Source information:
An RNA of 177 nucleotides, treated with 2A3 and DMS and read out base by base. The reactions ran in a buffer of 150 mM KOAc, 10 mM MgCl2 and 150 mM bicine (pH 8.5), at 24 C.

RNA sequence: GGGAACGACUCGAGUAGAGUCGAAAAUCGGAGUGAACAGAGAAAUCACCUCCAGAGGACCCCUUCAGCGAACAGAGGAGCCUUCGCGGGAUAGGAGUAAGACCAUAGCGAUGGGGGGAGAUGCUAGGGAUAAACAUUAGUUCGCUAAUGUUUAUCCAAAAGAAACAACAACAACAAC
Reactivity to 2A3 in 0.01 (KOAc 150mM, MgCl2 10mM, bicine 150mM(pH8.5), 24C), signal-to-noise 1, nucleotides 027 to 126: u060c020g000g010a040g030u080g050a240a100c110a150g130a020g060a260a080a080u020c000a010c010c080u000c010c020a020g020a030g020g030a060c020c010c000c000u020u090c060a040g000c010g040a030a020c020a070g080a100g090g060a020g020c020c020u060u060c020g000c010g020g000g070a050u130a080g030g050a070g060u080a080a020g050a020c020c010a100u080a020g050c050g050a040u070g000g010g000g000g040g000a040g010a000u140g050c050u060a020g200
Reactivity to DMS in 0.01 (KOAc 150mM, MgCl2 10mM, bicine 150mM(pH8.5), 24C), signal-to-noise 3, nucleotides 027 to 126: u000c050g010g010a030g010u000g010a060a150c140a200g010a120g030a110a110a110u000c020a110c090c050u000c010c020a170g020a060g000g020a110c040c010c000c030u010u010c070a090g000c030g000a020a030c050a130g010a080g010g010a080g010c030c050u000u010c040g010c070g000g010g020a080u020a050g010g000a090g020u010a050a060g000a070c030c030a080u000a090g020c040g030a110u000g000g010g000g000g000g000a090g000a080u010g020c080u000a070g010